[RMDB]
RNA sequence: GGGAACGACUCGAGUAGAGUCGAAAACAAUGACCAGUGCCCCAGGUGAGUGGAUGCUCCGACCGUAAAUGAGGCUGACAUCUGAUACACAUGUUCACGUGGGCACAUGCACACACACAUGCACGACAUGGGGAGUGUACACUUACUGACCUACACAGCUACGGUAAUACUUCGGUAUUACCGUAGCAAAAGAAACAACAACAACAAC
Reactivity to 2A3 in 0.01 (KOAc 150mM, MgCl2 10mM, bicine 150mM(pH8.5), 24C), signal-to-noise 3, nucleotides 027 to 156: c090a000a060u140g080a090c020c060a020g000u030g020c060c000c000c000a010g160g000u020g010a010g020u060g010g030a000u040g000c090u020c020c020g300a300c000c010g050u110a000a120a160u250g030a080g030g000c040u040g060a050c000a010u010c030u060g020a090u200a130c100a000c010a070u110g020u000u040c040a010c090g040u170g020g000g030c020a010c040a030u010g000c020a010c000a000c010a000c010a000c020a100u060g010c050a010c260g240a030c090a030u050g010g000g100g000a060g050u040g000u030a070c050a010c040u070u160a040c000u080g080a110c060c000u020a040c050a010c010a100
The record gives the reactivity of an RNA of 207 nucleotides to 2A3. High 2A3 reactivity points to a flexible backbone, as in loops and unpaired stretches. For 2A3 the reverse transcriptase was SuperScript II with manganese. Source: RMDB library OK3TST, as collected in RNAgym. The reactions ran in a buffer of 150 mM KOAc, 10 mM MgCl2 and 150 mM bicine (pH 8.5), at 24 C.